[RMDB]
RNA sequence: GGGAACGACUCGAGUAGAGUCGAAAAAGAAAGAGCGUAGCACACACUCAGACUAAGUCUGACACACUCCUACGCUAAACAUCUUAGUGUGUGAUCGAGAUAUCGAUGUGUGUGUAAGAUGAAAAAACAAACCUCUAUUGUUCGCAAUAGAGGUUUGAAAAGAAACAACAACAACAAC
Reactivity to DMS in 0.01 (KOAc 150mM, MgCl2 10mM, bicine 150mM(pH8.5), 24C), signal-to-noise 4, nucleotides 027 to 126: a120g010a100a100a100g010a150g020c010g010u000a050g010c010a020c020a020c000a010c010u000c000a020g010a020c030u010a100a150g020u000c010u000g010a020c020a010c000a000c010u000c040c010u000a010c010g020c040u000a050a110a130c020a000u000c000u000u000a040g000u000g010u000g010u000g010a040u000c010g010a040g000a180u010a080u000c010g020a010u000g010u000g020u000g010u010g010u010a010a020g000a010u000g010a010a050a080a070a070a080
Reactivity to 2A3 in 0.01 (KOAc 150mM, MgCl2 10mM, bicine 150mM(pH8.5), 24C), signal-to-noise 4, nucleotides 027 to 126: a000g180a050a070a010g120a020g050c020g010u010a000g000c010a000c000a000c000a000c000u010c010a010g000a010c040u170a240a080g030u000c010u010g000a000c000a000c000a000c000u020c000c000u000a000c000g010c040u030a080a050a010c010a000u000c000u010u040a010g000u000g000u000g010u000g020a020u000c020g010a010g040a190u200a100u220c000g000a000u000g000u000g000u000g000u000g000u010a000a010g000a010u030g060a100a040a010a010a000a010